Description:
The record gives the reactivity of an RNA of 177 nucleotides to DMS and 2A3. For 2A3 the reverse transcriptase was SuperScript II with manganese. The RNA was probed in 150 mM KOAc, 10 mM MgCl2 and 150 mM bicine (pH 8.5) at 24 C. It was measured as part of the RMDB library OK2TRN.
RNA sequence: GGGAACGACUCGAGUAGAGUCGAAAAGGCAUGAGGUGGUGAAGAAAGUGGAUGCUGUGUUUGAGUGGCACAUCACUAAAGAUGGAAACACUGCAGCCAAGUGGACUAUUGACCUAAAAAAUGGUUCCCCUGUGUCUGUAUUCGUACAGACACAGGGAAAAGAAACAACAACAACAAC
Reactivity to DMS in 0.01 (KOAc 150mM, MgCl2 10mM, bicine 150mM(pH8.5), 24C), signal-to-noise 2, nucleotides 027 to 126: g030g010c080a020u000g000a040g020g020u000g000g000u000g000a090a080g000a060a110a140g000u010g020g010a060u000g010c010u000g000u000g010u000u010u010g010a090g030u010g000g020c100a100c040a010u000c010a100c160u010a100a080a140g000a030u000g000g010a050a050a080c030a030c010u010g010c020a040g000c020c020a060a100g020u010g030g000a060c030u000a040u010u000g020a120c060c040u010a020a020a030a060a010a040u020g020g010u000u000c050
Reactivity to 2A3 in 0.01 (KOAc 150mM, MgCl2 10mM, bicine 150mM(pH8.5), 24C), signal-to-noise 2, nucleotides 027 to 126: g030g000c020a030u040g020a020g090g020u060g050g060u070g000a060a050g080a080a150a010g070u050g030g030a020u010g010c010u020g030u020g070u030u030u070g110a080g010u100g020g040c030a020c010a100u060c020a030c110u300a110a110a030g020a020u050g020g050a010a000a000c000a000c020u030g000c030a000g020c000c010a050a000g100u120g070g000a010c010u030a080u100u070g070a060c020c030u110a070a070a040a000a000a020u100g000g020u020u030c010